[RMDB]
RNA sequence: GGGAACGACUCGAGUAGAGUCGAAAAAGACGCCUUACGAGGCGUCAAUUAGCCCUGCGGCCCCACGCACCAGGGUAAGAGAGACUCUCGCUUCCUGCCCUGGCCCGAGGGACCGACUGGCUGGGAAGAUUGCUGAUAUCUUCGGAUAUCAGCAAUCAAAAGAAACAACAACAACAAC
Reactivity to 2A3 in 0.01 (KOAc 150mM, MgCl2 10mM, bicine 150mM(pH8.5), 24C), signal-to-noise 4, nucleotides 027 to 126: a000g000a010c000g030c000c000u070u030a060c270g070a030g020g010c000g000u000c000a000a000u030u030a020g020c000c000c000u010g000c000g000g000c000c000c000c000a040c030g030c000a010c010c000a010g010g100g010u080a240a000g090a000g010a020g090a110c040u110c010u010c260g050c090u150u030c000c000u010g010c000c000c000u000g000g030c010c030c000g030a050g000g000g020a050c000c010g040a110c050u040g040g030c020u020g010g060g020a030a080
Reactivity to DMS in 0.01 (KOAc 150mM, MgCl2 10mM, bicine 150mM(pH8.5), 24C), signal-to-noise 3, nucleotides 027 to 126: a040g000a000c010g010c010c000u010u010a140c220g010a040g030g030c000g030u000c000a000a000u060u010a060g000c020c010c080u000g020c020g010g020c000c010c000c020a110c040g040c300a120c000c000a020g030g000g030u000a000a000g010a100g010a080g000a070c090u020c090u020c090g000c020u000u000c020c040u000g010c000c000c010u000g020g000c020c300c010g000a080g030g000g000a040c020c010g000a070c090u000g000g020c040u010g010g010g000a070a160